[RMDB]
Overview
An RNA of 177 nucleotides, treated with DMS and 2A3 and read out base by base. For 2A3 the reverse transcriptase was SuperScript II with manganese. Source: RMDB library OK2TST, as collected in RNAgym. The DMS profile rests on 4,107 reads. Values cover nucleotides 27 to 126.
RNA sequence: GGGAACGACUCGAGUAGAGUCGAAAAUGUUAGCUGCUAGGCCAGAGAUCGUGCACCUUAUUCAAUUAGUUGGUGGGCUUUAUAUCGCGUGGAUGGGUGUGUCCUCUGUGCGGUCUGGGUGGCAACGGUUCUCUUCCAGAUUCGUCUGGAAGAGAACAAAAGAAACAACAACAACAAC
Reactivity to DMS in 0.01 (KOAc 150mM, MgCl2 10mM, bicine 150mM(pH8.5), 24C), signal-to-noise 3, nucleotides 027 to 126: u010g000u000u000a060g030c010u000g020c010u000a050g010g030c020c000a070g000a040g000a050u000c260g020u000g000c010a030c010c020u010u020a040u010u010c050a070a120u010u010a100g010u010u000g010g030u010g010g020g000c120u000u010u010a060u020a080u020c050g020c130g010u000g000g000a020u000g010g010g020u000g030u010g000u010c080c010u010c010u000g010u000g040c100g020g010u000c050u010g010g020g010u010g000g010c040a030a020c050g010
Reactivity to 2A3 in 0.01 (KOAc 150mM, MgCl2 10mM, bicine 150mM(pH8.5), 24C), signal-to-noise 3, nucleotides 027 to 126: u110g010u040u040a030g010c020u020g010c010u020a000g010g000c010c010a010g030a010g000a070u110c060g090u060g010c010a030c010c010u100u280a050u070u040c030a050a140u130u070a110g070u070u110g020g020u030g040g020g000c000u030u100u010a170u050a010u110c060g000c030g070u010g000g030a040u040g020g000g020u040g000u010g010u030c020c000u010c020u020g120u120g110c030g030g020u040c010u060g070g030g000u030g010g000c010a000a020c010g020